[RMDB]
RNA sequence: GGGAACGACUCGAGUAGAGUCGAAAAACUGGAGAUGGUGUCAAUGAUGCACCUGCACUGAAACUAGCUGACAUCGGAAUAGCGAUGGGGAUAACUGGAACUGAGGUUGCCAAGGAAGCAUCGGAUACAUCGAGGGAAGGUUCGCCUUCCCUCGAUGAAAAGAAACAACAACAACAAC
Reactivity to DMS in 0.01 (KOAc 150mM, MgCl2 10mM, bicine 150mM(pH8.5), 24C), signal-to-noise 1, nucleotides 027 to 126: a090c040u010g030g030a200g010a100u000g020g040u000g000u000c040a040a110u010g000a040u010g010c040a170c020c030u040g000c020a040c040u000g000a090a050a070c040u000a000g010c080u000g010a150c050a040u010c040g020g010a100a100u020a040g000c000g010a010u010g000g000g020g000a070u010a080a020c020u010g000g000a100a120c190u000g000a120g000g000u020u000g000c030c170a030a010g000g030a050a080g030c030a020u000c030g000g010a150u000a060
Reactivity to 2A3 in 0.01 (KOAc 150mM, MgCl2 10mM, bicine 150mM(pH8.5), 24C), signal-to-noise 1, nucleotides 027 to 126: a030c030u040g080g000a140g080a130u090g080g090u030g010u030c060a140a170u150g050a040u060g070c030a040c000c020u040g050c020a010c050u070g000a020a050a050c030u000a030g010c030u050g070a060c010a050u020c020g000g120a300a240u080a130g120c020g040a030u020g010g020g020g010a030u070a120a060c080u030g010g000a050a010c060u050g030a000g020g020u020u100g000c010c030a010a080g010g000a100a060g030c000a010u020c020g020g010a040u100a060